Structure probing data (DMS and 2A3) for a 177-nucleotide construct. Reactivities are given for positions 27 through 126. The reactions ran in a buffer of 150 mM KOAc, 10 mM MgCl2 and 150 mM bicine (pH 8.5), at 24 C.
RNA sequence: GGGAACGACUCGAGUAGAGUCGAAAAUACCAAUGGUUCGCCAUUGGUACUUGUAUUGACCAAUACUACCGUAGAAGUAUUCAGGUCUCAUAACUACGGAUAUACACUAGAGUUUCGACUCUAGUAACAUACUGUAAUCGUUCGCGAUUACAGUAUGAAAAGAAACAACAACAACAAC
Reactivity to DMS in 0.01 (KOAc 150mM, MgCl2 10mM, bicine 150mM(pH8.5), 24C), signal-to-noise 9, nucleotides 027 to 126: u000a010c000c000a000a010u000g000g010u000u010c220g030c010c000a000u000u000g010g010u000a000c050u000u000g010u000a130u010u000g000a190c140c060a090a040u000a010c020u000a100c010c020g010u000a010g010a160a050g010u000a020u010u000c170a090g010g000u000c060u010c080a060u010a100a100c010u000a010c010g000g000a290u010a080u010a090c200a040c010u000a010g000a020g000u000u000u010c200g000a030c000u000c000u000a000g000u000a040a150
Reactivity to 2A3 in 0.01 (KOAc 150mM, MgCl2 10mM, bicine 150mM(pH8.5), 24C), signal-to-noise 9, nucleotides 027 to 126: u030a000c000c000a000a000u010g000g040u040u050c230g040c070c000a000u000u010g000g000u000a020c020u030u100g080u090a130u040u180g070a040c010c000a010a010u020a020c010u050a150c000c020g020u020a010g020a200a010g040u020a050u080u150c120a080g040g130u020c040u030c060a150u130a160a080c010u010a010c010g010g030a040u040a020u030a170c070a000c020u010a000g000a000g010u030u100u110c190g090a020c000u000c000u000a000g000u000a000a010